[RMDB]
RNA sequence: GGGAACGACUCGAGUAGAGUCGAAAAGGCCGCUUUCGCCCAGCCAAAAUCGUGGCCCCUGGGUACGCGCCGGGGAGCAGGGUGCGCCGGGGCGGGAGUGCGCCGGGGUCGGAGUGCGCCGGGGCGGUGGAUACAGGUGAUUCGUCACCUGUAUCCAAAAAGAAACAACAACAACAAC
Reactivity to DMS in 0.01 (KOAc 150mM, MgCl2 10mM, bicine 150mM(pH8.5), 24C), signal-to-noise 1, nucleotides 027 to 126: g000g020c030c050g020c030u000u010u000c020g010c020c000c030a300g020c030c050a070a060a170a060u000c050g000u020g000g000c010c020c000c030u030g000g000g020u010a090c160g010c150g020c000c010g000g000g000g000a060g040c010a020g000g020g010u000g000c090g000c050c000g000g010g000g050c020g010g030g000a050g010u000g000c140g000c020c010g020g050g010g010u010c050g020g000a010g010u000g010c110g020c140c080g000g000g010g000c100g010g010
Chemical mapping of a 177-nucleotide RNA with DMS.
The reactions ran in a buffer of 150 mM KOAc, 10 mM MgCl2 and 150 mM bicine (pH 8.5), at 24 C.
Values cover nucleotides 27 to 126.
It was measured as part of the RMDB library OK2TRN.
DMS adducts were read by reverse transcription with MarathonRT.
For DMS, 1,372 sequencing reads were counted.